[RMDB]
RNA sequence: GGGAACGACUCGAGUAGAGUCGAAAAGCGCAAACCGUUCUGCAAUGUGUAAUUGGUGCUUGAUUAGCCAAGAUUCCAUAACUCACUACCCAGCUCUUAAGAUGGUUCAAACACAUCUUAGCCACUACUGUAAUGAUAUCUUCGGAUAUCAUUACAGAAAAGAAACAACAACAACAAC
Reactivity to DMS in 0.01 (KOAc 150mM, MgCl2 10mM, bicine 150mM(pH8.5), 24C), signal-to-noise 8, nucleotides 027 to 126: g010c060g000c050a060a090a110c080c050g010u010u000c030u000g020c070a090a060u010g020u010g020u000a080a090u000u000g010g020u000g010c030u000u000g010a120u010u000a100g010c080c020a050a060g000a090u000u000c020c030a040u000a080a120c080u000c050a050c070u000a130c050c030c010a100g000c090u010c130u000u000a020a030g010a030u000g010g010u000u010c240a090a100a100c250a050c010a010u000c010u000u000a040g010c080c100a060c160u000a130
Reactivity to 2A3 in 0.01 (KOAc 150mM, MgCl2 10mM, bicine 150mM(pH8.5), 24C), signal-to-noise 9, nucleotides 027 to 126: g040c030g020c040a040a040a050c030c020g040u060u030c030u060g030c020a030a110u070g030u030g020u110a070a110u070u050g030g000u050g030c000u060u050g060a110u100u130a020g040c020c010a020a010g030a110u100u010c010c000a010u020a050a030c010u010c050a020c020u040a050c000c010c010a020g020c030u020c010u120u030a010a000g010a010u020g010g050u100u130c090a100a140a020c080a010c000a100u000c000u010u010a010g030c020c020a090c060u170a040